The record gives the reactivity of an RNA of 177 nucleotides to DMS and 2A3. As a SHAPE reagent, 2A3 marks flexible, mostly unpaired nucleotides at the ribose 2'-OH. The data come from the RNA Mapping Database (RMDB), libraries RFM100 and RFMREP. For 2A3 the reverse transcriptase was SuperScript II with manganese.
RNA sequence: GGGAACGACUCGAGUAGAGUCGAAAACAGGAGCCGCCCUUCCGUGCCUCCAGCACCACGUGUCUGGGCCAUGUGAGCAAGGUCACAUGGGCCCGAUGUGGUGCUGGGGGCGGCAGGGCUCUGCUCUAUAAAAAGGGACAUUCGUGUCCCUUUUUAUAAAAGAAACAACAACAACAAC
Reactivity to DMS in 0.01 (KOAc 150mM, MgCl2 10mM, bicine 150mM(pH8.5), 24C), signal-to-noise 6, nucleotides 027 to 126: c080a140g010g000a000g020c010c300g000c000c000c000u000u000c010c010g020u020g030c010c000u000c010c000a010g000c000a000c000c000a000c010g010u010g010u060c020u030g010g020g010c010c000a010u000g020u000g010a030g010c190a160a150g030g000u000c000a010c000a020u000g010g010g020c000c000c000g000a000u000g020u000g000g000u000g000c000u000g010g000g000g000g010c000g000g000c050a020g000g000g000c010u000c040u010g000c000u000c010u000
Reactivity to 2A3 in 0.01 (KOAc 150mM, MgCl2 10mM, bicine 150mM(pH8.5), 24C), signal-to-noise 4, nucleotides 027 to 126: c040a020g060g000a000g000c000c020g000c000c030c010u000u010c020c010g130u140g150c000c000u010c000c000a000g010c000a000c000c000a000c020g050u050g060u070c200u300g000g010g000c000c000a000u010g000u000g010a050g070c200a300a090g290g150u010c000a000c000a010u010g010g130g050c000c000c010g000a000u000g000u000g000g000u000g000c000u000g000g010g000g000g000c000g000g010c010a000g000g000g000c000u010c000u030g000c000u000c010u010